[RMDB]
RNA sequence: GGGAACGACUCGAGUAGAGUCGAAAAGCGUACUACGAGUCUCUAGCGUGAGCUUGGAUUUACAGCGACUGCUUCCCAAAUAGGAAGCAGUGCUGUUGUCAGCUUCGGGCUCGUAUCGCAAAACGGUCCGACCAUCCGUUCGCGGAUGGUCGGACCGGGGAGAUACAAAGUUCGCUUUGUAUCUCCCAAAAGAAACAACAACAACAAC
Reactivity to 2A3 in 0.01 (KOAc 150mM, MgCl2 10mM, bicine 150mM(pH8.5), 24C), signal-to-noise 1, nucleotides 027 to 156: g010c010g030u100a020c070u000a000c000g000a010g000u020c000u030c170u210a120g170c120g120u290g040a020g010c040u160u100g230g000a110u230u300u220a000c000a000g010c110g160a020c010u020g000c000u000u000c000c000c040a200a300a050u200a130g010g000a000a000g030c000a000g000u000g000c000u010g020u000u000g010u000c010a000g000c010u020u060c040g000g010g010c000u010c000g000u000a000u020c010g030c020a000a000a000a180c020g010g020u050c040c000g000a000c000c030a020u000c070c000g040u070u090c280g020c040g160g000a000u000g000g000u020c000g040g000a000c000c010g010
Description: Chemical mapping of a 207-nucleotide RNA with 2A3. Source: RMDB library RNAMAK, as collected in RNAgym. The RNA was probed in 150 mM KOAc, 10 mM MgCl2 and 150 mM bicine (pH 8.5) at 24 C. Reactivities are given for positions 27 through 156.